[RMDB]
RNA sequence: GGGAACGACUCGAGUAGAGUCGAAAAGACCUAUAGCCUCGUCACCGCAGGGUGGACCUGACCGGCGAAGCCAGAGACAGUCUGCGUUCGGUGGAAUGCCCGUUACUCUAUUCGCAUAUUUACAGGGGCAGUGCUUUUCCCUGGUGAUGCCGAUUCCAUAAAGACGUUAGUUCGCUAACGUCUUUAUAAAAGAAACAACAACAACAAC
Reactivity to 2A3 in 0.01 (KOAc 150mM, MgCl2 10mM, bicine 150mM(pH8.5), 24C), signal-to-noise 4, nucleotides 027 to 156: g030a020c040c010u060a070u070a180g080c010c020u060c050g020u050c020a050c080c020g030c120a030g000g000g030u070g050g030a050c030c020u040g040a100c000c020g010g020c040g060a070a000g050c020c010a010g000a010g010a060c000a010g050u010c010u040g000c030g140u080u040c050g040g050u060g020g060a040a010u010g010c000c050c010g090u090u140a100c060u060c040u110a120u070u200c040g000c040a020u120a150u120u090u150a090c060a070g000g020g020g000c010a010g030u080g070c020u070u060u040u040c020c000c010u040g030g010u060g020a050u160g050c030c000g070a130u120u040c020c020
Reactivity to DMS in 0.01 (KOAc 150mM, MgCl2 10mM, bicine 150mM(pH8.5), 24C), signal-to-noise 4, nucleotides 027 to 156: g010a130c020c030u000a140u000a070g020c000c000u000c040g030u000c020a110c070c040g030c050a080g010g010g040u000g000g000a110c020c000u000g020a070c040c030g010g010c040g020a130a250g010c020c030a070g010a100g000a060c300a280g010u010c010u010g010c010g020u000u000c030g030g050u000g010g020a040a050u000g010c010c020c050g010u000u010a070c070u000c070u000a100u000u000c050g040c060a100u000a100u000u000u000a060c040a060g000g010g000g010c060a060g000u010g010c040u020u000u010u000c000c000c010u010g010g030u000g010a140u010g010c020c020g000a250u010u010c030c040